Record summary:
Source: RMDB library TTRINS, as collected in RNAgym. An RNA of 177 nucleotides, treated with DMS and read out base by base.

[RMDB]
RNA sequence: GGGAACGACUCGAGUAGAGUCGAAAAGAUAUGGACUGUUCGAUUUCUAAACUGUAUCUAACACAAAUACUGUCGGAAACGACAGAAUAUUGUUAGAUACAGUUUAGAAAUCGACAGUCCUAAGUCAUCGAGUUUAUUACUUCGGUAAUAAACUCGAAAAAGAAACAACAACAACAAC
Reactivity to DMS in 0.01 (KOAc 150mM, MgCl2 10mM, bicine 150mM(pH8.5), 24C), signal-to-noise 1, nucleotides 027 to 126: g010a060u020a300u000g020g010a010c000u000g000u030u010c010g030a030u000u000u000c000u010a000a010a020c000u000g000u020a010u000c010u000a010a000c000a040c300a160a110a130u000a090c000u000g000u000c030g010g010a090a100a180c010g020a000c000a000g000a110a030u020a130u020u000g000u000u000a000g010a010u000a000c000a000g010u000u000u000a010g000a000a000a000u000c000g010a030c000a010g000u000c000c000u000a000a020g010u000c040a150